[RMDB]
RNA sequence: GGGAACGACUCGAGUAGAGUCGAAAAUGAAAUAAAGCGUACGAAGAUGGACGUACGCAACCAGUGCGUACAGGAAUCGCACAUCCUGCGCUCUAAGGUGAGCGCAAAACCUAAUAAUAGAAAAAAAUCAUGUUUCUUAGUUCGCUAAGAAACAUGAAAAAGAAACAACAACAACAAC
Reactivity to DMS in 0.01 (KOAc 150mM, MgCl2 10mM, bicine 150mM(pH8.5), 24C), signal-to-noise 2, nucleotides 027 to 126: u010g020a120a090a070u030a070a120a150g000c020g040u000a000c010g010a180a070g010a130u020g010g030a150c040g020u010a010c000g020c020a020a040c140c100a090g020u000g010c000g010u000a120c220a080g020g000a140a030u010c030g000c010a000c000a170u000c050c060u000g020c000g020c000u010c000u010a080a130g000g010u000g010a010g000c010g010c000a000a000a030a090c050c030u000a020a090u020a040a120u010a150g000a020a000a020a150a060a090a090
Reactivity to 2A3 in 0.01 (KOAc 150mM, MgCl2 10mM, bicine 150mM(pH8.5), 24C), signal-to-noise 3, nucleotides 027 to 126: u040g020a020a010a010u180a070a060a040g000c000g000u000a020c000g030a090a080g120a160u180g060g070a030c000g000u000a010c010g000c010a000a000c010c000a010g000u000g000c010g010u040a050c070a140g110g160a100a030u110c010g000c000a000c000a000u030c010c030u000g000c020g020c000u000c010u050a120a090g280g000u090g040a000g000c000g000c000a010a020a030a030c000c000u020a050a060u250a090a080u170a180g110a120a040a030a010a000a000a060